[RMDB]
RNA sequence: GGGAACGACUCGAGUAGAGUCGAAAAGGAGGGUUGAGGGUGGGAGCUGGGUUAUCUCUCCCCCAUCUACGACCAAUUGGGUUAAGGGAAGGGCUAGGGUCGGGUAGGGUACUUCCAUUUACAUGGGGCUUGUACAAAGAUUCGUCUUUGUACAAGCAAAAGAAACAACAACAACAAC
Reactivity to 2A3 in 0.01 (KOAc 150mM, MgCl2 10mM, bicine 150mM(pH8.5), 24C), signal-to-noise 2, nucleotides 027 to 126: g010g000a040g010g030g040u120u150g050a080g070g040g090u180g030g000g030a040g020c100u020g010g060g040u130u180a190u090c070u000c020u000c080c000c000c000c000a040u000c030u080a070c090g050a020c000c040a010a050u190u240g120g000g050u080u100a150a060g060g020g100a060a140g050g010g060c130u140a020g090g040g130u200c060g000g010g070u100a070g020g000g010u010a060c000u120u000c000c000a020u070u150u150a160c130a060u060g000g000g030
Reactivity to DMS in 0.01 (KOAc 150mM, MgCl2 10mM, bicine 150mM(pH8.5), 24C), signal-to-noise 1, nucleotides 027 to 126: g010g010a100g020g000g000u010u000g000a300g000g000g000u010g050g000g000a080g010c160u000g020g010g000u010u010a090u060c040u000c040u000c050c060c000c010c010a030u000c110u000a130c150g010a090c070c020a100a260u000u000g010g000g000u000u010a120a070g020g000g020a120a100g000g000g000c090u000a100g000g000g000u010c160g000g030g000u000a050g010g000g030u010a040c070u000u010c000c000a010u020u000u000a070c180a080u000g000g000g020

An RNA of 177 nucleotides, treated with 2A3 and DMS and read out base by base. The reactions ran in a buffer of 150 mM KOAc, 10 mM MgCl2 and 150 mM bicine (pH 8.5), at 24 C. The DMS profile rests on 709 reads.